Chemical mapping of a 207-nucleotide RNA with 2A3 and DMS.
RNA sequence: GGGAACGACUCGAGUAGAGUCGAAAAAGCACUGAUAGAUGCUACAACAUGGUAGCAUGAAUGAACCUUGCUACCACGGUCUUUUGUGACUAGCUUCUUUCACUUGUCAUAAUGAUUUCAAGGUUCAGCCAUAAUGACACCAUUAUAAACCUUGAAAACGCGUAAAUAAUUUCGAUUAUUUACGCGUAAAAGAAACAACAACAACAAC
Reactivity to 2A3 in 0.01 (KOAc 150mM, MgCl2 10mM, bicine 150mM(pH8.5), 24C), signal-to-noise 7, nucleotides 027 to 156: a000g050c040a020c030u040g010a020u040a050g050a020u040g010c030u080a070c060a170a020c030a060u050g000g000u000a000g010c010a010u020g020a090a210u180g010a020a020c020c000u000u010g000c000u000a000c000c010a010c040g040g010u030c020u030u210u130u160g120u090g020a010c010u000a010g010c000u060u040c010u050u200u070c050a040c050u060u070g050u050c020a030u080a200a080u180g110a100u080u010u000c010a010a010g020g000u060u060c040a070g070c100c030a040u020a050a010u030g040a080c060a060c140c030a010u000u010a010u020a030a030a010c000c000u000u010g000a000a030a000
Reactivity to DMS in 0.01 (KOAc 150mM, MgCl2 10mM, bicine 150mM(pH8.5), 24C), signal-to-noise 3, nucleotides 027 to 156: a060g010c020a060c060u030g010a110u020a080g030a100u010g000c010u000a060c030a090a130c020a030u000g000g020u000a030g000c010a020u000g000a090a120u010g020a140a140c170c020u000u000g020c000u000a010c020c000a000c030g030g010u010c030u000u000u000u000g050u000g020a070c070u010a110g010c020u020u000c030u000u000u000c080a020c030u000u000g030u010c080a100u000a070a060u000g000a200u000u000u000c020a010a020g010g000u000u000c030a090g000c050c050a130u000a080a100u000g010a060c060a170c100c080a130u000u000a130u000a050a070a040c020c010u000u000g000a020a020a080
For 2A3, 6,033 sequencing reads were counted. Reactivities are given for positions 27 through 156. The RNA was probed in 150 mM KOAc, 10 mM MgCl2 and 150 mM bicine (pH 8.5) at 24 C.